[RMDB]
RNA sequence: GGGAACGACUCGAGUAGAGUCGAAAAGCUUUCCGUUUCGACGGAAAGCAAAGGCAAGUACAUGAGAGAUCAAACAUCACUCAGAAAAGCCGUACUAAAGAAAAAUCAAUCUGUUCGCAGAUUGAAAAGUAAAGCAGGAUUUCGAUCCUGCUUUACUAAAAGAAACAACAACAACAAC
Reactivity to 2A3 in 0.01 (KOAc 150mM, MgCl2 10mM, bicine 150mM(pH8.5), 24C), signal-to-noise 1, nucleotides 027 to 126: g000c010u000u000u030c000c010g020u020u020u100c150g090a030c000g000g000a000a000a000g020c000a030a010a010g000g010c030a060a020g010u060a040c120a220u070g000a000g020a030g000a000u030c150a100a140a180c080a010u000c010a010c020u000c010a000g040a000a080a010a010g000c010c050g030u020a040c030u110a090a100a100g060a060a100a000a030a040u030c010a000a000u000c000u000g000u020u080c280g030c100a010g020a020u000u000g040a030a040a020
Reactivity to DMS in 0.01 (KOAc 150mM, MgCl2 10mM, bicine 150mM(pH8.5), 24C), signal-to-noise 2, nucleotides 027 to 126: g000c000u000u000u000c010c000g020u000u010u020c170g010a010c000g000g010a040a000a010g010c000a000a020a160g020g020c020a010a040g020u000a030c040a070u000g020a030g040a020g020a020u000c080a100a100a110c170a110u000c000a050c010u010c000a090g020a030a140a160a190g010c000c010g000u000a130c070u030a060a070a090g020a010a080a060a130a090u000c010a000a010u000c000u000g030u010u010c160g000c010a000g000a040u000u000g000a000a030a060
This 177-nucleotide RNA was probed chemically with 2A3 and DMS. Source: RMDB library M2PK50, as collected in RNAgym. For DMS the reverse transcriptase was MarathonRT. High 2A3 reactivity points to a flexible backbone, as in loops and unpaired stretches.